[RMDB]
RNA sequence: GGGAACGACUCGAGUAGAGUCGAAAAAGUAAUGGCGUUUGUAACACCUUGUAAACCCAAUCAAUCAAUAAGUCAUUGCUAAGUAAAUGGAAAACAUAAGUCAAGAUAGCUACUAUAUACAUCGCCACUCGUCGACGUAUUUCGAUACGUCGACGAGAAAAGAAACAACAACAACAAC
Reactivity to 2A3 in 0.01 (KOAc 150mM, MgCl2 10mM, bicine 150mM(pH8.5), 24C), signal-to-noise 1, nucleotides 027 to 126: a000g070u070a070a130u050g000g000c050g080u120u100u000g070u000a040a040c000a070c110c030u040u030g190u130a110a040a000c030c020c000a000a000u040c000a000a000u000c000a000a000u090a180a000g040u000c090a000u010u000g000c010u110a000a070g040u090a230a000a000u260g030g010a210a110a280a000c130a140u210a010a010g030u090c000a020a000g000a300u070a160g130c070u110a000c090u000a000u000a000u000a300c020a070u000c000g000c000c000a000